[RMDB]
RNA sequence: GGGAACGACUCGAGUAGAGUCGAAAACCUACGAGUUCGCUCGUAGGAAAAAAGCGUACUACCUGAGGAUACUGGGUGGCUAUGAAGUCCCAAAUAGGAUGGAGCCACGUAUCUACCCACCAGGUAUCGCAAAAACAUAGCCCUUCGGGGCUAUGAACAGUCAGAAAAGCUUCGGCUUUUCUGACUGAAAAGAAACAACAACAACAAC
Reactivity to 2A3 in 0.01 (KOAc 150mM, MgCl2 10mM, bicine 150mM(pH8.5), 24C), signal-to-noise 1, nucleotides 027 to 156: c000c000u000a010c000g010a030g020u110u130c230g060c110u000c020g010u010a000g000g000a020a020a020a020a020a020g020c010g040u140a050c010u020a010c040c000u040g000a030g000g030a040u030a030c080u280g120g260g020u000g000g090c000u000a190u300g000a000a020g040u000c060c020c000a130a300a230u300a040g000g000a020u010g010g010a000g000c000c000a000c000g020u000a010u030c000u030a130c080c040c050a030c000c000a000g040g010u060a110u300c020g000c010a030a030a030a030a030c000a020u030a000g000c000c000c020u000u020c210g070g000g000g000c000u000a000u000g000a000a020